[RMDB]
RNA sequence: GGGAACGACUCGAGUAGAGUCGAAAAGGUAUCCACUUCGGUGGAUACCAAAGGCGAUCCCAGCAUCAGGGAACAACAUCAAUAGAUGCAUCCCUAACGCCAAAAUUCCGGAUUUCGAUCCGGAAAAACUAAAAUAAAUCUUCGGAUUUAUUUUAGUAAAAGAAACAACAACAACAAC
Reactivity to DMS in 0.01 (KOAc 150mM, MgCl2 10mM, bicine 150mM(pH8.5), 24C), signal-to-noise 2, nucleotides 027 to 126: g010g000u000a000u000c000c000a010c000u000u000c150g010g010u000g000g000a020u000a000c010c000a000a050a100g010g030c010g010a170u000c000c010c000a160g020c160a090u020c120a020g030g010g010a020a060c070a110a070c000a010u000c000a210a160u000a130g000a020u000g000c140a020u000c000c010c000u000a120a170c000g000c000c010a160a120a140a140u000u000c000c010g000g000a040u000u000u000c190g000a010u000c000c000g020g000a000a000a020a180
Reactivity to 2A3 in 0.01 (KOAc 150mM, MgCl2 10mM, bicine 150mM(pH8.5), 24C), signal-to-noise 2, nucleotides 027 to 126: g010g000u010a000u000c000c000a020c040u030u050c180g130g000u000g010g000a000u000a010c010c010a010a000a010g040g030c020g000a130u000c000c000c020a010g100c040a080u180c080a000g040g000g000a010a110c040a020a030c000a070u010c020a050a300u100a300g010a010u010g000c020a040u000c000c000c010u010a060a020c000g000c000c010a000a070a100a100u050u010c000c000g030g010a010u040u130u100c160g080a000u010c030c000g000g000a030a000a000a020